[RMDB]
RNA sequence: GGGAACGACUCGAGUAGAGUCGAAAAAGCUGCGCGAAAUCGGCGGAAAGGACCCCGCUAUCGGGAGAGGCUAGCAGCGAGGGUUGCCGCUCCAGCCGCGCUAUGAAGCAGGCAUAGCAGAUUUACAACUACCAUACGUAUUCGUACGUAUGGUAGUAAAAGAAACAACAACAACAAC
Reactivity to 2A3 in 0.01 (KOAc 150mM, MgCl2 10mM, bicine 150mM(pH8.5), 24C), signal-to-noise 5, nucleotides 027 to 126: a010g020c010u020g000c080g000c040g080a030a020a060u100c030g020g000c030g000g030a150a190a030g150g020a030c000c010c010c010g000c020u060a060u130c060g030g070g010a160g030a020g130g090c050u050a030g030c050a010g010c020g020a240g000g030g000u030u060g110c010c010g000c010u000c010c010a010g000c010c000g030c010g000c000u010a030u080g040a070a020g040c040a020g050g000c000a010u020a010g000c020a010g030a100u100u090u080a090c060a100
Reactivity to DMS in 0.01 (KOAc 150mM, MgCl2 10mM, bicine 150mM(pH8.5), 24C), signal-to-noise 9, nucleotides 027 to 126: a060g010c020u000g010c020g030c130g010a030a060a060u000c070g000g020c010g010g000a040a180a150g010g000a080c030c020c000c020g000c030u000a080u010c100g020g000g000a110g010a090g010g020c070u000a070g010c230a030g000c020g000a090g020g000g000u000u000g010c010c010g000c070u010c030c030a080g020c030c060g000c180g000c000u000a010u010g010a100a070g010c050a060g000g010c020a020u000a040g010c020a120g000a080u000u000u000a110c230a110

The record gives the reactivity of an RNA of 177 nucleotides to 2A3 and DMS. For 2A3, 24,026 sequencing reads were counted. Values cover nucleotides 27 to 126.